[RMDB]
RNA sequence: GGGAACGACUCGAGUAGAGUCGAAAAAACACAGCACUCUGCAAAGACGCAAGUCGAAGUAUAGGGUGUGACACGUGACCAAUGCCGAAAGAUUAAGGCAAGGGGUUAGCCGCAAGGCGAAGCUCUAGAACCCAAUGCAUUUCGAUGCAUUGGGUUCAAAAGAAACAACAACAACAAC
Reactivity to DMS in 0.01 (KOAc 150mM, MgCl2 10mM, bicine 150mM(pH8.5), 24C), signal-to-noise 3, nucleotides 027 to 126: a060a030c010a030c080a300g090c000a000c020u020c000u000g020c050a020a120a180g000a030c000g000c210a020a180g000u000c010g000a090a140g000u010a050u030a020g000g000g010u000g000u000g030a070c210a060c140g000u000g010a300c030c000a100a080u040g000c000c010g000a140a030a100g000a140u010u030a040a080g000g000c040a210a150g000g000g000g000u000u000a300g000c000c000g030c300a050a140g000g000c000g000a050a160g000c020u000c000u000a220
Reactivity to 2A3 in 0.01 (KOAc 150mM, MgCl2 10mM, bicine 150mM(pH8.5), 24C), signal-to-noise 3, nucleotides 027 to 126: a000a000c010a000c000a000g000c000a000c000u000c000u050g010c000a130a080a090g000a000c000g030c190a150a020g000u000c030g030a170a000g010u040a100u170a110g010g000g000u000g000u020g080a010c020a000c180g000u030g020a030c000c020a040a090u090g010c000c000g050a070a120a090g180a190u130u070a090a010g010g010c000a030a120g030g000g000g000u160u020a000g000c000c000g010c050a070a040g000g000c020g000a010a000g020c000u010c000u000a020
Chemical mapping of a 177-nucleotide RNA with DMS and 2A3. Conditions: 150 mM KOAc, 10 mM MgCl2 and 150 mM bicine (pH 8.5), 24 C. It was measured as part of the RMDB libraries RFM100 and RFMREP. The 2A3 profile rests on 2,291 reads. For 2A3 the reverse transcriptase was SuperScript II with manganese. For DMS the reverse transcriptase was MarathonRT.